[RMDB]
RNA sequence: GGGAACGACUCGAGUAGAGUCGAAAAGAUAUGGAAUGAUGGGACAUGCGAUCUCGGAAACGAGUAUCGCAACAGCCCAAUAUUCCUAAGUCAAACCAGGCCCUUUAGUUCGCUAAAGGGCCUGGAACAUAGUUCAGUGGUUCGCCACUGAACUAUGAAAAGAAACAACAACAACAAC
Reactivity to DMS in 0.01 (KOAc 150mM, MgCl2 10mM, bicine 150mM(pH8.5), 24C), signal-to-noise 2, nucleotides 027 to 126: g000a040u000a300u010g000g010a030a020u000g010a080u000g000g020g010a030c090a200u000g010c020g000a010u000c010u000c000g000g000a060a040a140c010g010a010g000u000a010u000c000g010c000a000a020c220a140g020c010c000c000a020a040u000a030u000u000c000c000u000a030a100g000u000c020a070a120a190c000c010a000g000g000c000c000c000u000u000u000a000g020u000u010c230g030c000u000a000a010a010g000g000g000c000c000u000g000g000a010a070